RNA sequence: GGGAACGACUCGAGUAGAGUCGAAAAGCGUGCGUGUUCGCACGCACGCAAAGCGGCCAGCUCCAGGCCGCCAAACAAUAUGGAGCACAAAUGUCUGCAAAAAAAGAAUGGUGUUCGCACCAUUCAACUAUUGACUAAACUUCGGUUUAGUCAAUAGAAAAGAAACAACAACAACAAC
Reactivity to 2A3 in 0.01 (KOAc 150mM, MgCl2 10mM, bicine 150mM(pH8.5), 24C), signal-to-noise 5, nucleotides 027 to 126: g000c000g000u000g000c010g000u040g040u070u160c210g010c100a000c010g000c010a000c010g000c010a000a060a030g000c000g000g000c000c000a050g000c020u000c000c000a000g000g000c010c010g000c010c020a110a130a010c050a040a000u030a030u040g010g010a000g100c000a000c010a000a030a030u200g060u080c070u170g110c110a040a110a030a030a010a030a050g010a010a000u000g000g010u020g020u050u080c230g030c050a000c000c000a000u000u000c000a000a000
Reactivity to DMS in 0.01 (KOAc 150mM, MgCl2 10mM, bicine 150mM(pH8.5), 24C), signal-to-noise 4, nucleotides 027 to 126: g000c010g020u000g020c000g050u010g010u010u040c200g020c010a000c010g000c000a000c000g020c000a060a050a120g000c000g020g010c000c010a110g000c010u000c010c000a010g000g020c010c000g010c010c160a030a060a040c110a010a010u000a080u000g000g010a010g020c010a150c200a060a060a070u010g000u000c080u010g010c170a000a000a050a070a060a090a140g010a020a000u000g010g010u000g000u000u010c170g020c000a000c000c000a000u000u000c010a070a110
The record gives the reactivity of an RNA of 177 nucleotides to 2A3 and DMS. DMS adducts were read by reverse transcription with MarathonRT. Source: RMDB library M2PK50, as collected in RNAgym. Conditions: 150 mM KOAc, 10 mM MgCl2 and 150 mM bicine (pH 8.5), 24 C.